[RMDB]
RNA sequence: GGGAACGACUCGAGUAGAGUCGAAAAUGGAUACUCGUUGCCAAGGCAGUCACUGCUCCGGAUACUGCAGAGGAAAGUGAGAACAGGAGAUGGAAUAAAUAUUUGCAGCAAAGACGAGUAAAUGCACGUGAACCGUUAAAUUCGUUUAACGGUUCACAAAAGAAACAACAACAACAAC
Reactivity to 2A3 in 0.01 (KOAc 150mM, MgCl2 10mM, bicine 150mM(pH8.5), 24C), signal-to-noise 3, nucleotides 027 to 126: u070g090g030a030u030a050c010u010c000g000u020u060g040c040c030a030a020g090g020c000a000g020u140c030a020c190u020g000c030u010c010c020g010g010a030u060a080c010u030g020c000a030g030a050g080g110a140a100a030g100u120g030a090g020a060a030c040a040g050g060a150g020a050u040g010g040a110a030u090a130a120a000u140a180u070u070u090g000c020a030g000c050a130a080a000g020a000c000g000a010g000u010a010a060a010u110g020c050a040c130
Reactivity to DMS in 0.01 (KOAc 150mM, MgCl2 10mM, bicine 150mM(pH8.5), 24C), signal-to-noise 4, nucleotides 027 to 126: u000g020g020a210u010a030c010u000c020g010u000u000g010c020c020a050a220g030g010c040a050g000u020c090a150c050u000g000c050u010c040c200g000g000a300u000a070c040u000g000c040a080g000a140g030g000a080a040a050g010u010g010a100g000a140a110c060a070g010g020a080g030a110u000g030g020a090a090u000a060a080a080u000a100u010u010u010g050c020a060g030c090a030a120a130g010a060c010g000a010g020u000a040a070a080u010g020c110a090c250
Structure probing data (2A3 and DMS) for a 177-nucleotide construct. The RNA was probed in 150 mM KOAc, 10 mM MgCl2 and 150 mM bicine (pH 8.5) at 24 C. For DMS, 2,348 sequencing reads were counted. DMS adducts were read by reverse transcription with MarathonRT. For 2A3, 2,604 sequencing reads were counted.